[RMDB]
RNA sequence: GGGAACGACUCGAGUAGAGUCGAAAAGAAAACUACUGGGCAUCACCGGAUUUAGCCGCUUCGUCUCGUGUCAGCCCGACGGCCUGGAUCAGCUCCUCGUGUAGUUCGAACCACACGGUGUGGUAGGGGCUCAUCAUAUGUUCGCAUAUGAUGAGCCAAAAGAAACAACAACAACAAC
Reactivity to DMS in 0.01 (KOAc 150mM, MgCl2 10mM, bicine 150mM(pH8.5), 24C), signal-to-noise 1, nucleotides 027 to 126: g020a130a050a070a100c010u000a040c090u000g010g020g000c070a150u000c030a040c090c040g020g010a070u000u000u000a070g000c030c050g000c080u000u010c050g010u000c000u020c120g030u000g010u010c160a110g020c030c010c030g020a120c110g000g000c020c030u010g000g000a040u000c070a090g050c030u000c000c010u000c040g020u010g000u000a000g010u000u000c050g000a120a100c000c000a020c030a120c140g010g040u010g020u000g000g000u000a100g020g000
Reactivity to 2A3 in 0.01 (KOAc 150mM, MgCl2 10mM, bicine 150mM(pH8.5), 24C), signal-to-noise 1, nucleotides 027 to 126: g020a000a030a030a000c010u070a030c020u070g000g050g010c000a070u060c020a050c010c000g040g010a000u040u100u120a040g070c020c020g030c060u050u030c050g060u010c020u010c050g060u020g090u060c040a060g040c020c000c010g020a050c040g020g030c010c040u010g040g000a060u020c020a000g030c020u000c000c010u010c010g060u090g010u010a050g000u000u100c060g050a050a020c000c000a000c000a000c080g200g040u200g000u000g140g010u000a050g050g040